[RMDB]
RNA sequence: GGGAACGACUCGAGUAGAGUCGAAAAUAGCUGCAACAUUAUUUGAGUAUCCUGAAAACGGGCUUUUCAGGAUGGUGUUGCCGUAUAAAAUUGUAGGAGUGCAUAGUGGCCCGUAUAGCAGGCAUUAGAGAGCUACAGAUGUUCGCAUCUGUAGCAACACUAUUUCGUCCUUCGGGACGAAAUAGUGAAAAGAAACAACAACAACAAC
Reactivity to 2A3 in 0.01 (KOAc 150mM, MgCl2 10mM, bicine 150mM(pH8.5), 24C), signal-to-noise 2, nucleotides 027 to 156: u090a010g000c000u000g050c000a010a010c010a010u020u090a100u120u290u100g070a060g070u130a010u010c010c000u000g000a000a000a000a010c110g160g050g040c020u020u020u020u010c010a000g000g000a000u010g000g010u000g000u010u000g000c000c000g020u030a040u090a140a150a030a080u150u140g030u060a060g020g060a020g010u050g020c020a060u070a060g040u060g050g000c000c020c030g030u070a040u040a070g060c010a000g010g000c010a000u030u120a040g050a010g010a000g060c010u000a000c000a000g000a000u010g020u030u050c160g020c070a000u000c000u000g000u000a000g000c000a000a000
Reactivity to DMS in 0.01 (KOAc 150mM, MgCl2 10mM, bicine 150mM(pH8.5), 24C), signal-to-noise 1, nucleotides 027 to 156: u000a150g020c050u000g020c020a010a060c000a010u000u000a130u000u000u000g020a220g020u000a050u000c000c000u000g010a010a020a020a020c080g020g020g050c150u000u000u000u000c010a050g000g020a010u000g000g010u000g000u000u020g010c000c050g030u000a120u010a050a050a040a180u000u000g040u000a140g040g010a110g010u000g060c060a080u000a060g000u000g040g030c010c020c050g000u000a100u000a080g000c030a040g000g000c020a110u000u000a130g000a180g000a150g020c000u000a020c000a020g010a010u000g010u000u000c300g040c010a020u010c000u000g030u000a010g010c000a010a030